[RMDB]
RNA sequence: GGGAACGACUCGAGUAGAGUCGAAAAGUGCCAUCGAGCGCCUGGUCGCACUCGGCUGGACCGAGGAGGCAAUCGGCAUUGCACUCGCCCAGUCGGUCCGCCAGAUCAGAAGACUGCGUCUUCUCGCCACUGCUCAGCGCUUCGGCGCUGAGCAGUGAAAAGAAACAACAACAACAAC
Reactivity to 2A3 in 0.01 (KOAc 150mM, MgCl2 10mM, bicine 150mM(pH8.5), 24C), signal-to-noise 1, nucleotides 027 to 126: g040u030g000c000c000a190u140c110g000a100g000c000g000c010c010u070g030g010u260c120g020c040a030c000u130c000g040g000c120u210g000g080a030c040c000g000a000g010g080a100g150g000c090a000a010u020c130g110g000c230a030u040u100g020c000a030c050u000c000g020c000c010c000a000g060u010c000g000g000u000c000c060g000c000c070a030g000a050u020c080a020g070a040a020g050a030c010u140g100c130g050u030c000u010u000c050u000c000g000c000

Description
Chemical mapping of a 177-nucleotide RNA with 2A3. Reactivities are rounded to 0.1 and cut off at 0 and 3. The reactions ran in a buffer of 150 mM KOAc, 10 mM MgCl2 and 150 mM bicine (pH 8.5), at 24 C. It was measured as part of the RMDB library OK1LIB.